[RMDB]
RNA sequence: GGGAACGACUCGAGUAGAGUCGAAAAGAUAUGUACAAUAUCAGCCUAGGGACAUAUACAAGGCUAUGUACUGGCAGCAGCUCUGUUAACAUGUUGUAAUUACAGCAACGCUGAUGGACAAGGGCCAGCCAUUUGUCAUCUCACCUGAUGAGUGGCCCAUGAAACGUUGUUUCGACAACGUUUCAUGAAAAGAAACAACAACAACAAC
Reactivity to DMS in 0.01 (KOAc 150mM, MgCl2 10mM, bicine 150mM(pH8.5), 24C), signal-to-noise 3, nucleotides 027 to 156: g010a060u000a020u000g010u010a110c050a110a060u000a050u000c030a150g010c020c010u000a120g010g030g020a130c060a070u010a130u000a060c070a110a090g010g040c020u000a070u010g020u010a040c030u000g000g010c010a050g010c050a100g030c090u020c010u020g000u000u000a080a050c060a140u000g050u000u010g010u000a110a150u000u000a090c040a070g010c060a020a020c080g030c010u000g020a050u000g010g000a080c030a050a100g010g010g010c010c000a070g010c030c020a020u000u000u000g000u000c000a030u010c030u010c120a050c090c040u000g020a000u000g000a030g000u000g000g000c010c120
Reactivity to 2A3 in 0.01 (KOAc 150mM, MgCl2 10mM, bicine 150mM(pH8.5), 24C), signal-to-noise 4, nucleotides 027 to 156: g050a050u080a020u090g080u040a070c070a090a050u050a050u150c030a010g030c010c010u070a090g060g010g070a030c060a070u210a000u070a120c090a140a050g020g000c020u030a040u070g020u030a060c030u030g040g000c020a010g000c000a000g000c010u000c010u060g030u030u030a100a030c040a140u120g020u040u000g020u070a070a090u140u130a080c050a030g010c040a060a040c050g000c020u020g000a050u040g020g010a020c040a110a100g030g000g000c010c010a010g000c000c000a020u050u040u030g010u010c010a030u030c040u020c060a090c050c040u050g030a030u020g000a020g020u010g000g000c010c030